Chemical mapping of a 177-nucleotide RNA with DMS and 2A3. Values cover nucleotides 27 to 126. For DMS, 1,752 sequencing reads were counted. The data come from the RNA Mapping Database (RMDB), library OK1LIB.

RNA sequence: GGGAACGACUCGAGUAGAGUCGAAAAGCUGAGGCAGUCGCUGACUACGCAAAACAGGGUGUAGAAUUCAUGAAAACACAGGCAUUAAAAAUCCGUGAGACGCCCACAUUUAAGAACUCAGUGGAUACCAGAUGUCAUGUUUCGACAUGACAUCUGGAAAAGAAACAACAACAACAAC
Reactivity to DMS in 0.01 (KOAc 150mM, MgCl2 10mM, bicine 150mM(pH8.5), 24C), signal-to-noise 2, nucleotides 027 to 126: g010c030u000g000a000g000g060c070a200g010u030c090g100c120u000g000a120c060u000a110c030g000c030a180a050a050a080c200a100g030g010g030u000g030u010a050g000a120a140u070u030c070a090u000g020a010a030a110a200c090a030c050a060g030g010c140a170u020u000a070a020a040a090a160u020c000c010g020u000g000a050g000a050c070g000c010c000c020a050c040a140u070u000u040a080a140g010a070a030c060u000c000a030g000u010g010g010a160u060a110
Reactivity to 2A3 in 0.01 (KOAc 150mM, MgCl2 10mM, bicine 150mM(pH8.5), 24C), signal-to-noise 3, nucleotides 027 to 126: g000c000u000g030a020g000g000c070a000g020u070c020g010c180u050g030a030c000u060a010c020g090c040a040a070a060a110c070a140g100g060g000u010g030u020a060g030a140a070u150u080c040a050u180g110a050a120a020a000c030a010c040a170g020g000c030a000u030u250a070a050a060a000a060u020c020c040g000u000g040a000g000a010c030g030c000c030c010a080c020a040u140u230u070a090a030g010a040a020c000u000c040a020g020u040g050g070a040u080a080